[RMDB]
RNA sequence: GGGAACGACUCGAGUAGAGUCGAAAACGUGGGCGAUACCCUGUGCAUCGUUGAAGCCAUGAAAAUGAUGAACCAGAUCGAAGCGGACAAAUCCGGUACCGUGAAAGCAAUUCUGGUCGAAAGUGGACAGUAUGUGGUUUUUCGAAACCACAUACUGAAAAGAAACAACAACAACAAC
Reactivity to 2A3 in 0.01 (KOAc 150mM, MgCl2 10mM, bicine 150mM(pH8.5), 24C), signal-to-noise 4, nucleotides 027 to 126: c050g040u100g000g000g050c060g020a070u120a250c040c000c040u060g060u060g010c030a070u120c030g030u060u080g060a130a010g000c000c010a020u080g090a080a070a000a040u180g040a040u040g020a030a030c000c000a000g000a010u020c040g060a110a010g010c020g010g010a030c060a050a200a060u060c060c050g040g020u100a230c000c000g020u020g070a090a040a000g010c040a010a030u140u050c000u000g000g000u000c010g090a070a040a070g060u030g030g010a020
Reactivity to DMS in 0.01 (KOAc 150mM, MgCl2 10mM, bicine 150mM(pH8.5), 24C), signal-to-noise 5, nucleotides 027 to 126: c120g010u010g010g000g010c020g000a080u010a070c070c010c020u000g030u020g010c050a040u020c060g020u000u000g000a110a100g000c020c010a000u000g000a080a080a060a130u060g010a120u020g000a130a030c020c000a020g000a010u000c100g000a130a270g000c020g000g010a100c080a060a060a050u010c090c080g000g020u020a080c040c010g040u000g010a070a060a180g010c160a090a070u030u000c020u010g000g010u000c030g000a080a030a120g000u010g020g010a290
The record gives the reactivity of an RNA of 177 nucleotides to 2A3 and DMS. Reactivities are given for positions 27 through 126. The RNA was probed in 150 mM KOAc, 10 mM MgCl2 and 150 mM bicine (pH 8.5) at 24 C.